[RMDB]
RNA sequence: GGGAACGACUCGAGUAGAGUCGAAAAACACUCACUCAAAAAGAACGCUUCUGAUUAAGACGGUUGAAACUAGGGAUGGACAGGUUAUCAACGAAACUUCUCAGCAUCAUGAUGACCUUGAGUGAAGGGUAUGAGGCUCCUUCGGGAGCCUCAUACCAAAAGAAACAACAACAACAAC
Reactivity to 2A3 in 0.01 (KOAc 150mM, MgCl2 10mM, bicine 150mM(pH8.5), 24C), signal-to-noise 1, nucleotides 027 to 126: a000c010a000c000u000c000a020c000u040c000a000a010a010a000a000g030a040a000c030g000c020u030u000c000u000g120a140u030u150a000a000g190a010c120g040g000u010u000g000a030a000a000c030u080a170g050g000g280a110u160g080g210a020c020a040g090g000u050u030a070u110c000a050a000c120g090a180a000a000c050u000u000c000u000c010a110g010c080a030u040c040a040u090g090a080u030g030a070c000c040u000u040g000a000g000u000g020a070a030g050

Structure probing data (2A3) for a 177-nucleotide construct. It was measured as part of the RMDB library OK1LIB. High 2A3 reactivity points to a flexible backbone, as in loops and unpaired stretches. The 2A3 profile rests on 485 reads. Conditions: 150 mM KOAc, 10 mM MgCl2 and 150 mM bicine (pH 8.5), 24 C.